[RMDB]
RNA sequence: GGGAACGACUCGAGUAGAGUCGAAAACACCGGGGCCUUGUUGGCACCGCAGCAAACAGGACGCGUCGUCGCGACAACGGCAGGCUGGGCAACCGGCUGGUGCCGAACGUCGCUCGACACGGGGGUGUUGACACCACACUUUCGAGUGUGGUGUCAAAAAAGAAACAACAACAACAAC
Reactivity to 2A3 in 0.01 (KOAc 150mM, MgCl2 10mM, bicine 150mM(pH8.5), 24C), signal-to-noise 2, nucleotides 027 to 126: c000a010c000c040g020g040g020g000c020c020u110u220g040u030u180g160g020c020a020c010c000g010c000a040g010c050a080a030a070c050a040g080g100a030c000g000c000g030u010c000g000u010c130g040c000g030a020c010a120a030c000g000g000c000a010g000g000c000u000g000g000g000c010a050a100c020c000g030g000c000u050g080g190u130g000c000c000g000a020a000c050g000u000c000g000c000u010c000g000a000c010a010c020g020g000g000g040g000u040g030
Reactivity to DMS in 0.01 (KOAc 150mM, MgCl2 10mM, bicine 150mM(pH8.5), 24C), signal-to-noise 3, nucleotides 027 to 126: c110a190c080c010g010g000g000g010c060c060u020u040g000u000u000g000g010c050a010c110c050g010c110a110g000c070a110a050a090c070a040g000g010a150c040g020c090g000u000c000g000u000c300g060c000g000a000c000a160a300c020g050g000c000a210g000g000c010u000g000g000g000c300a080a040c000c000g000g020c020u010g030g030u040g040c000c000g010a030a190c300g000u000c000g000c000u000c070g000a020c000a080c010g010g000g020g010g050u000g010